[RMDB]
RNA sequence: GGGAACGACUCGAGUAGAGUCGAAAAGAAAAUGCGUACUUGUCGCUAAACAAGCAAAUAAAAAGGCUAGGAUUGCCGAAAAUCCCAAAUAAAAUCCCUUGAUGUGGGUAAACAUCGAAAUAAGAAAGGGUAACUUAAACUUCGGUUUAAGUUACCCAAAAGAAACAACAACAACAAC
Reactivity to 2A3 in 0.01 (KOAc 150mM, MgCl2 10mM, bicine 150mM(pH8.5), 24C), signal-to-noise 1, nucleotides 027 to 126: g120a000a140a060a150u300g000c010g000u000a000c000u000u100g020u000c000g030c200u150a090a030a020c000a030a030g100c080a020a020a020u300a110a040a030a140a000g060g070c000u030a000g040g040a220u020u090g000c000c000g130a030a020a020a020u000c030c000c020a000a060a000u300a000a090a000a100u060c000c000c000u010u010g000a000u000g130u010g000g260g050u140a010a000a000c000a000u000c000g050a000a060a060u300a000a050g130a110a100a060

Conditions: 150 mM KOAc, 10 mM MgCl2 and 150 mM bicine (pH 8.5), 24 C. This 177-nucleotide RNA was probed chemically with 2A3. It was measured as part of the RMDB library OK1LIB.